Chemical mapping of a 177-nucleotide RNA with DMS and 2A3. For 2A3 the reverse transcriptase was SuperScript II with manganese. Source: RMDB library OK1LIB, as collected in RNAgym.

RNA sequence: GGGAACGACUCGAGUAGAGUCGAAAAGGCGCUUAUGUCCAAGGCAACACACAUGCUUCUAUCGCCGGUACUAUGGGCAGCGAAACUGUAAGGAGGUGUGAAUCUUGAUAACGCUGGUCUCAGUGCGAAAAAUAAUAUUAUUCGUGAUAUUAUUUUUAAAAGAAACAACAACAACAAC
Reactivity to DMS in 0.01 (KOAc 150mM, MgCl2 10mM, bicine 150mM(pH8.5), 24C), signal-to-noise 9, nucleotides 027 to 126: g000g010c020g020c180u010u010a050u010g010u020c160c040a050a040g000g010c100a090a110c080a050c040a030c050a070u010g010c020u000u010c030u010a110u000c030g010c010c030g010g010u020a070c090u030a080u030g010g010g010c030a130g000c030g010a050a070a110c160u020g010u030a050a050g010g000a070g010g010u010g000u010g000a130a100u010c020u000u000g000a070u010a050a130c030g010c010u000g000g010u010c020u000c030a100g010u020g010c100g010
Reactivity to 2A3 in 0.01 (KOAc 150mM, MgCl2 10mM, bicine 150mM(pH8.5), 24C), signal-to-noise 9, nucleotides 027 to 126: g040g000c020g000c050u090u070a050u160g070u030c070c030a020a030g030g020c040a150a050c030a040c010a000c010a080u120g110c000u030u010c020u060a100u050c020g010c020c000g030g010u040a050c050u070a120u210g060g040g000c020a010g000c010g050a130a100a060c070u090g030u170a050a040g050g040a030g000g050u030g010u020g070a040a040u020c010u040u060g020a040u050a100a020c030g000c020u030g010g060u020c010u010c030a060g050u100g060c040g050